[RMDB]
RNA sequence: GGGAACGACUCGAGUAGAGUCGAAAAGAUAUGGAAUCCCGGAGUCGCACCGUGAUAUCGGAAACGAUGUUUGCGGUGAACUACGAUUAAGGGAUUCCUAAGUCAAACAGGUCCUUCGGGACCUGAACCGUUUUAUUAUCUUCGGAUAAUAAAACGGAAAAGAAACAACAACAACAAC
Reactivity to 2A3 in 0.01 (KOAc 150mM, MgCl2 10mM, bicine 150mM(pH8.5), 24C), signal-to-noise 2, nucleotides 027 to 126: g010a010u080a010u150g010g010a010a000u000c000c010c030g000g010a040g000u010c010g000c030a000c000c000g010u010g020a010u000a000u010c020g020g010a080a040a040c020g000a000u010g080u110u060u260g020c000g000g010u000g000a010a000c010u140a040c020g020a000u060u040a030a050g010g010g000a000u000u010c000c000u000a000a000g020u000c020a030a070a090c000a010g000g000u000c000c000u070u170c270g110g000g000a000c000c000u000g000a010a030
Reactivity to DMS in 0.01 (KOAc 150mM, MgCl2 10mM, bicine 150mM(pH8.5), 24C), signal-to-noise 5, nucleotides 027 to 126: g010a020u000a300u010g000g010a010a000u000c000c000c000g020g040a250g010u000c000g010c000a010c000c010g040u000g000a010u000a000u010c000g000g000a130a120a220c000g020a010u000g010u000u000u000g040c000g000g000u000g000a060a040c130u010a300c020g000a020u000u000a250a300g000g000g000a000u000u000c000c000u000a020a070g000u000c020a090a080a220c000a010g000g010u000c000c000u000u010c190g040g000g000a000c010c000u000g000a040a150

Chemical mapping of a 177-nucleotide RNA with 2A3 and DMS. In probing experiments dimethyl sulfate is read out at A N1 and C N3, which are open when not base-paired. It was measured as part of the RMDB library TTRDEL.